The record gives the reactivity of an RNA of 177 nucleotides to DMS and 2A3.
The reactions ran in a buffer of 150 mM KOAc, 10 mM MgCl2 and 150 mM bicine (pH 8.5), at 24 C.
RNA sequence: GGGAACGACUCGAGUAGAGUCGAAAAGUGCAGGCUGGUGCGCAUGCGGUGUAUCAUGCUAGUCGAAUCAAUCUUGAUUAUGUUAAGCCUGUUUCGACCGGCAUUCAGGUGAUCAAUGCGGGCGAACAAUGUGGGCAUCGUUCGCGAUGCCCACAUUAAAAGAAACAACAACAACAAC
Reactivity to DMS in 0.01 (KOAc 150mM, MgCl2 10mM, bicine 150mM(pH8.5), 24C), signal-to-noise 1, nucleotides 027 to 126: g000u010g020c010a060g000g000c010u000g000g040u010g050c060g040c120a120u000g000c020g020g000u000g030u020a070u040c120a000u000g000c010u030a080g030u000c000g020a000a000u000c020a000a100u050c000u010u000g020a000u000u030a120u090g000u000u000a000a070g000c050c070u000g020u000u000u000c030g000a060c030c050g080g000c000a030u000u000c130a030g000g000u020g030a100u030c060a070a080u020g000c010g000g030g000c030g000a050a090c080
Reactivity to 2A3 in 0.01 (KOAc 150mM, MgCl2 10mM, bicine 150mM(pH8.5), 24C), signal-to-noise 2, nucleotides 027 to 126: g110u110g000c020a020g120g040c050u140g010g040u120g030c020g000c070a040u140g010c060g070g000u130g000u030a070u260c030a000u040g000c010u000a000g000u000c000g050a050a000u000c000a040a020u010c030u060u020g000a050u040u290a150u280g220u140u050a000a000g000c000c050u020g000u020u010u010c020g000a020c000c010g000g060c070a000u060u020c060a020g100g000u130g010a030u110c060a070a060u070g010c000g040g000g000c000g010a010a010c030

Annotation:
DMS (dimethyl sulfate) methylates the pairing face of unpaired adenines and cytosines. For 2A3 the reverse transcriptase was SuperScript II with manganese.